[RMDB]
Source: RMDB library OK1LIB, as collected in RNAgym. An RNA of 177 nucleotides, treated with DMS and 2A3 and read out base by base. The reactions ran in a buffer of 150 mM KOAc, 10 mM MgCl2 and 150 mM bicine (pH 8.5), at 24 C.
RNA sequence: GGGAACGACUCGAGUAGAGUCGAAAACAUCGAAGCCUACGUGGCAGUGCAGACUAGAGUGGAACUCGUAAUCCUCACGGGAGACGCGAGGCAGAGCACCCACCACGAGAACAACGAGCAGGCCAUGUAUCAGUCCUCAAUUCGUUGAGGACUGAUAAAAAGAAACAACAACAACAAC
Reactivity to DMS in 0.01 (KOAc 150mM, MgCl2 10mM, bicine 150mM(pH8.5), 24C), signal-to-noise 5, nucleotides 027 to 126: c120a100u020c070g010a080a120g030c020c030u010a090c060g020u000g010g010c250a090g000u000g010c060a110g010a170c080u000a120g000a170g040u020g020g030a150a210c020u000c010g000u020a140a150u000c010c010u000c150a060c130g000g000g020a040g010a120c140g020c020g010a030g000g030c100a200g020a090g000c050a070c040c040c020a120c010c010a080c020g010a070g000a090a140c090a040a040c060g000a090g000c050a040g010g000c000c020a050u010g020
Reactivity to 2A3 in 0.01 (KOAc 150mM, MgCl2 10mM, bicine 150mM(pH8.5), 24C), signal-to-noise 7, nucleotides 027 to 126: c040a070u160c100g070a070a020g040c010c010u040a050c050g030u040g010g030c040a050g060u020g020c010a010g050a150c080u120a050g040a040g160u100g040g020a050a020c010u000c010g020u050a010a050u040c000c010u090c060a080c150g060g040g020a100g030a020c120g000c010g030a010g040g000c040a030g010a010g060c040a080c000c040c000a010c000c010a040c050g090a100g020a140a050c090a060a030c040g050a020g030c010a000g010g020c000c020a030u070g020

2A3 adducts were read by reverse transcription with SuperScript II with manganese.
For 2A3, 7,889 sequencing reads were counted.